[RMDB]
RNA sequence: GGGAACGACUCGAGUAGAGUCGAAAAGAUAUGGAGUAACAGGAGGUAGCCGAUAAGACAGAACCGGAUUCGGAAACGAAUCCCGUUCAAUGACGUCGGAACUACUACCUCCUGUUACUCCUAAGUCCUUCAAUUGAAUCUUCGGAUUCAAUUGAAGAAAAGAAACAACAACAACAAC
Reactivity to DMS in 0.01 (KOAc 150mM, MgCl2 10mM, bicine 150mM(pH8.5), 24C), signal-to-noise 3, nucleotides 027 to 126: g010a100u000a300u010g000g000a010g030u020a010a020c000a010g010g000a020g000g010u000a020g020c000c030g010a030u000a140a210g020a180c250a120g000a000a010c000c280g000g000a040u000u000c000g000g000a090a110a240c010g000a000a000u000c000c000c200g000u010u000c000a030a150u000g030a130c300g000u000c000g020g020a020a030c050u010a300c010u000a010c000c000u000c000c000u000g000u000u000a000c000u000c000c000u000a000a050g010u000c020

An RNA of 177 nucleotides, treated with DMS and read out base by base. It was measured as part of the RMDB library TTRINS. For DMS, 1,983 sequencing reads were counted. Reactivities are given for positions 27 through 126. For DMS the reverse transcriptase was MarathonRT.